About this RNA:
An RNA of 177 nucleotides, treated with 2A3 and DMS and read out base by base. The 2A3 profile rests on 4,260 reads. For DMS, 5,116 sequencing reads were counted. It was measured as part of the RMDB library OK2TRN. For DMS the reverse transcriptase was MarathonRT. The reactions ran in a buffer of 150 mM KOAc, 10 mM MgCl2 and 150 mM bicine (pH 8.5), at 24 C. Reactivities are given for positions 27 through 126.

[RMDB]
RNA sequence: GGGAACGACUCGAGUAGAGUCGAAAAACAUGCUCCUAGUGAUGCCAUAAUGGAGGUAGAGAGCAAAAGUAGCUUGCUACACAAGUACCUCAAAUCGGGAGGUGUCAGGCAACGGAACACUGAAGUGUACCUAAUGACUCUUCGGAGUCAUUAGGUAAAAAGAAACAACAACAACAAC
Reactivity to 2A3 in 0.01 (KOAc 150mM, MgCl2 10mM, bicine 150mM(pH8.5), 24C), signal-to-noise 4, nucleotides 027 to 126: a000c030a030u080g030c010u040c000c010u020a030g080u040g170a100u100g050c020c010a050u070a270a110u300g100g050a100g030g030u060a030g040a010g000a010g030c010a090a040a020a000g090u090a040g040c050u020u060g010c010u130a050c060a020c020a120a060g060u060a050c010c010u040c040a080a090a120u160c060g070g080g010a030g000g030u010g030u050c050a030g030g000c000a020a040c070g030g010a030a010c050a000c060u090g060a150a010g080u080g040
Reactivity to DMS in 0.01 (KOAc 150mM, MgCl2 10mM, bicine 150mM(pH8.5), 24C), signal-to-noise 5, nucleotides 027 to 126: a120c080a080u000g010c030u010c000c030u010a100g010u010g000a140u010g010c030c030a120u010a120a110u010g000g010a060g000g010u000a030g010a140g000a060g020c040a050a050a080a100g020u010a050g010c030u000u000g010c020u000a040c030a090c090a070a090g010u000a060c010c000u010c030a030a090a130u010c150g000g000g000a070g000g010u000g000u010c050a070g000g010c040a060a080c080g010g000a050a070c020a030c090u010g000a060a090g020u010g010